[RMDB]
Record summary:
Structure probing data (DMS and 2A3) for a 177-nucleotide construct. The data come from the RNA Mapping Database (RMDB), libraries RFM100 and RFMREP. The reactions ran in a buffer of 150 mM KOAc, 10 mM MgCl2 and 150 mM bicine (pH 8.5), at 24 C.
RNA sequence: GGGAACGACUCGAGUAGAGUCGAAAAGACAAGGUGACCUACUUAUACUAAAAUGUAAGCCUGUAUUUAAGCAGUAUAAGCAAUACUUAAAUAUAUUACUGCCCUUAGAUCAAAGCUAUAUGCAUUACAACUUAUCGGGUUUCGACCCGAUAAGUUGAAAAGAAACAACAACAACAAC
Reactivity to DMS in 0.01 (KOAc 150mM, MgCl2 10mM, bicine 150mM(pH8.5), 24C), signal-to-noise 2, nucleotides 027 to 126: g040a190c060a110a110g000g010u020g000a000c110c040u000a010c000u040u000a020u020a080c010u000a100a020a040a050u040g060u000a000a070g000c000c020u010g050u000a030u020u000u040a050a010g000c050a000g010u000a070u000a030a100g010c130a080a090u040a110c030u020u040a000a070a120u000a070u050a030u060u020a050c030u000g000c000c030c060u000u040a040g000a030u000c030a060a140a130g000c020u000a080u010a300u020g010c060a090u030u000a180
Reactivity to 2A3 in 0.01 (KOAc 150mM, MgCl2 10mM, bicine 150mM(pH8.5), 24C), signal-to-noise 3, nucleotides 027 to 126: g050a010c070a130a040g040g050u070g010a020c010c010u000a020c040u120u070a070u050a060c040u090a020a060a130a060u150g050u020a090a000g000c000c010u040g080u020a070u000u050u020a010a020g000c020a010g030u040a080u000a080a050g040c060a110a040u070a150c040u140u120a050a070a050u150a030u110a060u140u060a030c020u020g000c020c030c000u000u030a000g010a020u010c040a110a060a000g000c000u050a030u010a070u300g020c010a020u050u050a010